[RMDB]
This 177-nucleotide RNA was probed chemically with DMS and 2A3. For 2A3 the reverse transcriptase was SuperScript II with manganese. The RNA was probed in 150 mM KOAc, 10 mM MgCl2 and 150 mM bicine (pH 8.5) at 24 C. For DMS, 2,026 sequencing reads were counted.
RNA sequence: GGGAACGACUCGAGUAGAGUCGAAAACGUGUCCUCCGCUCUUUGUUUUGGGGGGAACCCCCUGUGGGUCAAAAGUUGGUAUUUACUCAGGCGGCGAAGGCUGCAAACCCCGGUGCGAUCACUGUCCUGCACUGAUGUUAUUCGUAACAUCAGUGCAAAAAGAAACAACAACAACAAC
Reactivity to DMS in 0.01 (KOAc 150mM, MgCl2 10mM, bicine 150mM(pH8.5), 24C), signal-to-noise 2, nucleotides 027 to 126: c130g010u000g000u000c030c010u000c020c040g000c080u000c090u010u000u010g010u010u010u000u010g020g020g000g010g000g020a100a070c030c010c000c020c060u000g010u010g010g020g000u000c070a050a070a100a100g010u010u000g020g030u000a100u000u000u000a070c030u000c060a160g020g020c040g000g010c010g000a110a090g010g010c040u000g000c050a030a080a130c040c010c010c000g000g030u000g000c080g000a080u000c040a020c080u010g000u000c020c030
Reactivity to 2A3 in 0.01 (KOAc 150mM, MgCl2 10mM, bicine 150mM(pH8.5), 24C), signal-to-noise 2, nucleotides 027 to 126: c020g030u060g060u040c010c000u000c010c030g030c040u050c000u140u180u160g180u110u230u180u180g050g010g000g000g040g040a030a020c020c000c000c000c020u070g100u200g030g030g020u080c040a000a000a000a100g030u120u170g040g020u070a140u040u190u020a030c010u070c080a030g080g000c020g000g040c000g080a040a010g080g010c040u030g050c010a030a000a270c020c020c000c010g050g000u000g010c030g020a020u140c020a030c050u020g030u070c020c030